[RMDB]
This 177-nucleotide RNA was probed chemically with DMS and 2A3. The reactions ran in a buffer of 150 mM KOAc, 10 mM MgCl2 and 150 mM bicine (pH 8.5), at 24 C. For 2A3 the reverse transcriptase was SuperScript II with manganese. Values cover nucleotides 27 to 126.
RNA sequence: GGGAACGACUCGAGUAGAGUCGAAAACUUGCAUCAGUGUGCUUUUGAUGUUAAUGUUUAAUUUAUAGAAAAACCCUGAACUAAUUUUAUAACUCAAAAUCAGCCCUUACAAGCUCACGUGCUCACCUGUACGAUAAAAAUUCGUUUUUAUCGUACAAAAAGAAACAACAACAACAAC
Reactivity to DMS in 0.01 (KOAc 150mM, MgCl2 10mM, bicine 150mM(pH8.5), 24C), signal-to-noise 2, nucleotides 027 to 126: c050u000u000g000c010a010u000c010a020g000u000g040u000g000c120u000u000u000u000g010a010u010g000u000u000a070a050u020g000u010u010u010a080a060u020u010u010a230u030a250g000a110a120a180a220a110c060c060c030u010g000a060a100c040u000a040a050u000u000u000u000a070u000a080a080c050u010c030a020a010a060a060u010c040a050g000c040c020c030u000u000a040c080a030a030g000c000u000c070a040c070g000u000g020c040u000c080a110c100c090
Reactivity to 2A3 in 0.01 (KOAc 150mM, MgCl2 10mM, bicine 150mM(pH8.5), 24C), signal-to-noise 1, nucleotides 027 to 126: c010u050u120g000c010a010u010c090a080g010u030g000u040g180c020u050u170u070u100g020a050u090g010u050u140a140a060u040g010u000u090u000a060a050u090u020u100a300u030a120g070a080a150a020a020a060c010c010c010u030g050a060a000c050u050a090a100u140u070u100u130a170u030a000a010c010u000c080a050a110a000a110u040c050a030g060c020c010c000u060u050a040c060a070a010g030c000u010c010a020c030g050u060g080c000u040c000a010c080c060